RNA sequence: GGGAACGACUCGAGUAGAGUCGAAAAAAGUAGUUUGCUGUCCAAAAUAUCUACUAACCCCAGUUUGGAAAGCCCUUUCUCUUCGAAAUCUUUACUAGAUUGUUCUCCUGUACAAGCUGUAAAGAAGCCUAGUGCGAGGGUUCGCCCUCGCACUAGGAAAAGAAACAACAACAACAAC
Reactivity to 2A3 in 0.01 (KOAc 150mM, MgCl2 10mM, bicine 150mM(pH8.5), 24C), signal-to-noise 1, nucleotides 027 to 126: a000a000g040u060a060g010u060u150u110g120c120u040g000u000c020c000a020a020a020a020u250a050u020c150u180a080c030u030a020a090c050c000c000c000a080g020u000u000u110g030g020a070a000a050g000c000c000c000u000u000u040c000u000c010u000u120c090g050a080a110a110u040c030u000u030u000a060c060u160a000g050a060u030u030g010u060u000c160u100c150c080u220g000u000a000c000a060a090g000c050u000g010u120a040a030a040g090a040a000g020
Structure probing data (2A3) for a 177-nucleotide construct. 2A3 adducts were read by reverse transcription with SuperScript II with manganese. For 2A3, 350 sequencing reads were counted. Source: RMDB library OK1LIB, as collected in RNAgym. Reactivities are given for positions 27 through 126.